[RMDB]
RNA sequence: GGGAACGACUCGAGUAGAGUCGAAAAAAACUUUCGAAGGAGCUUACUUUUACUGAGUUUUACUUAAAAGUCUCCGAUUCAAAGCUCAGCAACAGUAGUUUGCAUUAGUAACAACUCAAUCAUUGUCGGGCGGAUCCAAGUUUGGCAAUAUCAUAACACGAUAAACUAGUUUCGACUAGUUUAUCGUAAAAGAAACAACAACAACAAC
Reactivity to 2A3 in 0.01 (KOAc 150mM, MgCl2 10mM, bicine 150mM(pH8.5), 24C), signal-to-noise 4, nucleotides 027 to 156: a000a000a000c050u110u080u100c070g040a040a030g030g000a000g030c030u080u130a050c010u070u120u070u050a090c040u040g020a030g060u090u100u040u110a060c030u070u100a060a060a080a060g100u110c090u100c140c030g040a060u090u100c040a040a040a010g010c020u060c080a010g030c010a010a050c010a060g150u140a010g040u140u050u080g010c050a050u100u080a030g080u040a080a030c060a040a030c070u030c090a060a080u070c030a030u020u050g030u020c010g000g010g000c010g030g010a020u050c050c050a090a020g000u020u030u010g010g000c010a020a010u040a040u190c040a020u070a100a030c050
Reactivity to DMS in 0.01 (KOAc 150mM, MgCl2 10mM, bicine 150mM(pH8.5), 24C), signal-to-noise 2, nucleotides 027 to 156: a050a020a030c030u000u000u010c080g020a140a110g000g000a050g020c070u010u000a030c030u000u010u000u010a070c050u010g020a060g030u000u000u000u010a070c050u000u020a030a090a070a040g000u000c010u000c030c050g010a160u010u000c060a050a090a130g000c030u000c040a120g020c020a020a020c050a120g020u000a070g010u000u010u000g000c040a120u000u020a120g050u000a090a090c030a040a050c050u000c020a090a120u020c060a100u000u000g010u010c040g000g000g030c040g000g000a090u010c090c050a050a220g010u000u000u000g010g020c040a050a110u000a080u000c060a060u000a090a150c160